[RMDB]
An RNA of 177 nucleotides, treated with DMS and 2A3 and read out base by base. The DMS profile rests on 1,501 reads.
RNA sequence: GGGAACGACUCGAGUAGAGUCGAAAAGAUAUGGAACGGGUACCAUCAACAGCUCGGAAACGAGACAUGAUGUGUACGCCGUUCCUAAGUCAAAACGUACAGUUUGUGUUCGCACAAACUGUACGAAGUUCGUGUCAACGUUCGCGUUGACACGAACAAAAGAAACAACAACAACAAC
Reactivity to DMS in 0.01 (KOAc 150mM, MgCl2 10mM, bicine 150mM(pH8.5), 24C), signal-to-noise 2, nucleotides 027 to 126: g000a030u000a300u000g000g020a010a010c010g030g010g060u000a000c000c000a010u000c000a030a120c300a190g000c000u000c000g000g020a090a130a210c000g020a000g000a040c130a230u000g000a000u000g000u000g000u000a010c010g030c010c000g020u010u000c010c010u000a010a080g000u010c020a090a020a110a110c000g000u000a000c000a000g000u010u000u000g040u000g000u000u010c300g040c000a000c000a010a000a020c000u000g010u000a010c010g000a010a040
Reactivity to 2A3 in 0.01 (KOAc 150mM, MgCl2 10mM, bicine 150mM(pH8.5), 24C), signal-to-noise 1, nucleotides 027 to 126: g030a020u080a020u130g000g000a000a030c010g030g010g000u020a000c060c000a000u000c000a000a130c010a140g070c000u000c020g050g000a000a070a060c030g000a000g020a030c010a050u120g000a010u000g290u060g000u040a000c030g010c000c000g000u000u000c000c000u000a010a000g020u000c070a000a000a110a140c010g000u000a000c000a010g000u030u020u000g020u010g050u040u090c300g000c130a000c010a000a000a010c000u010g000u000a010c000g000a030a010
For 2A3, 3,510 sequencing reads were counted. Conditions: 150 mM KOAc, 10 mM MgCl2 and 150 mM bicine (pH 8.5), 24 C.